RNA sequence: GGGAACGACUCGAGUAGAGUCGAAAAACUAGUAUGUACAGGGGUGAGUUGACCUGUCAUCUAGACUGCUGACCAUCAACUCACCGGUCAGCUGGAUGAUGUCCACAGACUACGACAUCAGUACUCAGACUUAUGAUGCCUUCGGGUAUCGUAAGUCAAAAGAAACAACAACAACAAC
Reactivity to DMS in 0.01 (KOAc 150mM, MgCl2 10mM, bicine 150mM(pH8.5), 24C), signal-to-noise 9, nucleotides 027 to 126: a250c010u000a010g000u050a010u000g010u050a010c000a010g000g000g000g010u010g010a080g020u000u010g000a080c010c010u000g010u000c000a000u000c000u000a010g000a190c050u000g000c010u000g010a010c000c050a140u020c110a050a060c090u010c060a070c150c120g000g010u000c010a010g000c000u010g000g000a120u010g010a010u000g000u000c000c220a140c200a140g010a130c200u020a100c220g010a010c000a010u000c000a060g010u020a060c050u010c070a250
Reactivity to 2A3 in 0.01 (KOAc 150mM, MgCl2 10mM, bicine 150mM(pH8.5), 24C), signal-to-noise 9, nucleotides 027 to 126: a000c010u010a010g050u140a070u060g060u090a010c000a010g030g020g030g050u140g090a120g040u060u070g100a070c000c010u000g000u000c000a000u000c000u010a020g070a140c040u040g000c000u000g000a000c010c010a050u110c050a060a090c070u040c110a060c040c050g000g000u000c000a000g000c010u020g040g020a080u060g000a000u010g020u010c030c020a090c090a130g140a090c120u130a060c160g010a000c000a000u000c010a010g040u050a050c030u030c090a020
Chemical mapping of a 177-nucleotide RNA with DMS and 2A3. Conditions: 150 mM KOAc, 10 mM MgCl2 and 150 mM bicine (pH 8.5), 24 C. For 2A3, 79,504 sequencing reads were counted. 2A3 adducts were read by reverse transcription with SuperScript II with manganese.